Structure probing data (DMS and 2A3) for a 207-nucleotide construct.
The 2A3 profile rests on 1,568 reads.
For 2A3 the reverse transcriptase was SuperScript II with manganese.
The reactions ran in a buffer of 150 mM KOAc, 10 mM MgCl2 and 150 mM bicine (pH 8.5), at 24 C.
Source: RMDB library M2RFPK, as collected in RNAgym.
For DMS the reverse transcriptase was MarathonRT.
[RMDB]
RNA sequence: GGGAACGACUCGAGUAGAGUCGAAAACAGUUCGGUUGGAGCGACAAGUAUUUAGCUUGAGAUAGCUAAAUCACCUCGGUAUGAUUAGGGUGAGACCUAGGAACCGUAGGGGUAUUCUCAAAGGAAGGUUACCGAACAACCUUCGGGUUGUUCGGAAGUUUUAAUCUACGUUCGCGUAGAUUAAAACAAAAGAAACAACAACAACAAC
Reactivity to DMS in 0.01 (KOAc 150mM, MgCl2 10mM, bicine 150mM(pH8.5), 24C), signal-to-noise 2, nucleotides 027 to 156: c010a130g000u000u000c030g020g030u010u000g010g010a060g030c010g010a070c060a020a060g000u000a050u000u000u000a010g020c000u000u000g000a230g000a140u000a050g010c020u000a020a020a020u000c030a050c010c020u000c010g020g020u000a100u000g020a210u000u000a020g010g010g040u000g000a300g020a100c010c010u000a050g000g020a100a080c020c010g040u010a040g010g040g000g000u010a070u000u020c010u000c020a070a070a130g000g010a080a050g020g000u010u010a140c010c000g000a020a000c010a000a010c000c000u000u000c300g060g020g040u000u000g020u000u000c010g010g000a020a020
Reactivity to 2A3 in 0.01 (KOAc 150mM, MgCl2 10mM, bicine 150mM(pH8.5), 24C), signal-to-noise 2, nucleotides 027 to 156: c030a040g030u070u050c040g070g060u070u090g070g020a040g020c030g060a040c030a060a020g060u070a050u020u000u000a000g000c000u000u030g030a030g020a140u170a030g000c000u000a010a000a000u020c010a020c000c010u020c010g020g000u220a180u140g070a070u080u060a030g000g040g000u070g090a080g020a050c020c000u010a020g000g030a020a020c030c030g020u050a030g010g000g000g000u010a060u120u050c050u010c000a050a070a010g070g020a040a020g050g010u090u100a030c000c000g000a000a000c000a000a000c000c010u010u000c010g050g010g000u010u000g000u000u000c010g000g010a000a000